Structure probing data (2A3) for a 207-nucleotide construct. For 2A3 the reverse transcriptase was SuperScript II with manganese. The data come from the RNA Mapping Database (RMDB), library M2RFPK.

RNA sequence: GGGAACGACUCGAGUAGAGUCGAAAAGGUGAAAGCGUAUCGGGGAAGAUAAGCUAGCAGCAAAAAGGAACCGAUUCCCACCAAGUUCGGAAAGAGAUACCGGGCGAGGCGCUGAAGAAAGAAUCUCAAACUCCCGCAAGUUUCGACUUGCGGGAAACCAUUUGAUGCUGUUCGCAGCAUCAAAUGGAAAAGAAACAACAACAACAAC
Reactivity to 2A3 in 0.01 (KOAc 150mM, MgCl2 10mM, bicine 150mM(pH8.5), 24C), signal-to-noise 1, nucleotides 027 to 156: g080g000u070g050a080a010a000g020c010g000u030a010u040c020g000g000g020g040a100a000g040a140u050a090a000g000c040u020a020g030c050a020g000c060a050a030a030a050a120g160g000a050a000c030c010g010a050u040u020c030c000c010a010c020c000a020a040g000u020u000c010g010g000a120a030a130g020a070g000a000u000a060c010c010g000g020g000c000g010a020g030g000c030g010c060u090g000a080a030g080a040a090a000g040a070a070u000c040u000c020a080a080a080c040u000c020c000c000g000c000a010a000g000u040u150u280c160g150a020c000u000u010g000c010g000g000g000a000a000a000